[RMDB]
RNA sequence: GGGAACGACUCGAGUAGAGUCGAAAACAUUGUCUUACAUCGCGGGCCCGGACCUGGCAUCAUGCCUUCUUGGGGGCUUUCGGCCUCUAAGCCGCCUUAUUCCGGGAUCGCGGACCGCGAUCCGACACAUGACGUAUUCUUUCGAGAAUACGUCAUGAAAAGAAACAACAACAACAAC
Reactivity to DMS in 0.01 (KOAc 150mM, MgCl2 10mM, bicine 150mM(pH8.5), 24C), signal-to-noise 9, nucleotides 027 to 126: c060a100u020u000g010u000c010u000u030a160c300a040u000c020g020c000g010g000g000c030c000c010g010g000a050c060c010u010g000g010c070a020u010c160a040u010g000c030c070u010u010c020u000u010g000g010g000g010g010c010u000u020u020c220g010g000c010c010u010c010u000a000a020g010c300c300g000c040c040u010u000a020u000u010c000c000g000g000g010a030u010c010g010c160g020g000a080c050c010g030c010g000a010u010c150c300g000a020c030a100
Reactivity to 2A3 in 0.01 (KOAc 150mM, MgCl2 10mM, bicine 150mM(pH8.5), 24C), signal-to-noise 9, nucleotides 027 to 126: c050a080u070u070g010u010c010u060u140a070c070a070u010c010g000c000g010g000g030c030c000c000g010g010a020c000c000u010g010g000c000a010u020c010a000u040g010c020c000u100u130c000u020u050g010g000g000g010g000c000u080u180u130c090g080g010c000c000u000c000u000a000a000g000c020c010g010c000c010u010u020a020u020u010c000c000g010g010g040a030u020c070g020c030g030g000a010c000c000g000c000g000a010u020c020c050g000a010c010a000
Record summary:
An RNA of 177 nucleotides, treated with DMS and 2A3 and read out base by base. 2A3 adducts were read by reverse transcription with SuperScript II with manganese. Conditions: 150 mM KOAc, 10 mM MgCl2 and 150 mM bicine (pH 8.5), 24 C.